Annotation
Chemical mapping of a 177-nucleotide RNA with DMS and 2A3. For 2A3, 2,353 sequencing reads were counted. The DMS profile rests on 1,199 reads.
RNA sequence: GGGAACGACUCGAGUAGAGUCGAAAAGAUAUGGAGUGUGUAGGUCCCGUCGAUAAGUCGGAAACGACUUUUGACGACGAAACUACCACUCCUAAGUCAAACGCAGAUUAGUUCGCUAAUCUGCGAAGUAUAGAUUGGCCUUCGGGCCAAUCUAUACAAAAGAAACAACAACAACAAC
Reactivity to DMS in 0.01 (KOAc 150mM, MgCl2 10mM, bicine 150mM(pH8.5), 24C), signal-to-noise 2, nucleotides 027 to 126: g010a040u000a300u000g000g000a020g040u010g000u000g020u000a020g000g010u000c060c050c010g030u020c000g010a030u010a000a010g040u010c000g000g010a090a090a230c000g010a020c000u000u000u000u000g000a070c060g010a060c070g000a110a070a110c000u000a000c000c000a000c000u000c000c000u020a020a090g000u000c020a130a160a280c010g000c000a040g000a000u000u000a010g020u010u010c230g000c010u000a000a000u000c010u010g000c000g000a000a070
Reactivity to 2A3 in 0.01 (KOAc 150mM, MgCl2 10mM, bicine 150mM(pH8.5), 24C), signal-to-noise 1, nucleotides 027 to 126: g050a000u050a020u110g020g000a000g020u030g000u070g020u030a000g000g080u110c110c180c030g000u010c010g010a040u010a230a000g000u000c010g000g040a040a040a090c010g000a020c000u030u060u020u070g140a040c020g010a000c050g050a150a070a030c000u000a000c000c000a010c000u010c000c000u020a090a000g000u050c040a100a000a070c010g040c000a000g010a000u020u010a000g070u050u090c230g010c270u000a000a000u000c000u000g000c000g000a020a010